RNA sequence: GGGAACGACUCGAGUAGAGUCGAAAACGGCUGGCGGCCAAGCGGCGCAACAUCGUCGACCCGCUGGCGCUGACGGCCGGUGACCUGGUGGUGCACGAUCAGCACGGCAUCGGCCGGUUCGUGGAGAGCCUAGUGGGAGUUUCGACUCCCACUAGGCAAAAGAAACAACAACAACAAC
Reactivity to DMS in 0.01 (KOAc 150mM, MgCl2 10mM, bicine 150mM(pH8.5), 24C), signal-to-noise 2, nucleotides 027 to 126: c080g000g070c010u000g010g030c010g000g020c090c170a180a100g000c040g010g000c030g000c170a130a180c300a110u000c010g010u000c000g000a060c070c000c000g020c010u000g010g000c030g030c050u000g000a090c010g000g000c000c000g010g010u010g020a100c000c030u000g020g030u010g010g000u000g000c110a130c150g000a070u000c040a020g020c020a020c150g020g010c020a010u000c030g000g020c000c000g000g000u000u040c040g050u040g010g020a160g000a180
Reactivity to 2A3 in 0.01 (KOAc 150mM, MgCl2 10mM, bicine 150mM(pH8.5), 24C), signal-to-noise 1, nucleotides 027 to 126: c020g040g000c050u020g000g030c010g000g060c030c030a060a010g060c000g010g000c000g020c060a080a130c050a210u250c010g020u040c000g030a070c020c000c060g000c010u020g030g000c060g040c110u160g020a070c010g050g000c030c020g020g000u020g030a220c000c000u040g180g060u020g010g060u050g000c130a070c300g110a200u120c010a000g070c000a000c020g000g000c000a000u020c010g020g000c030c010g040g000u090u050c070g030u080g000g110a160g000a020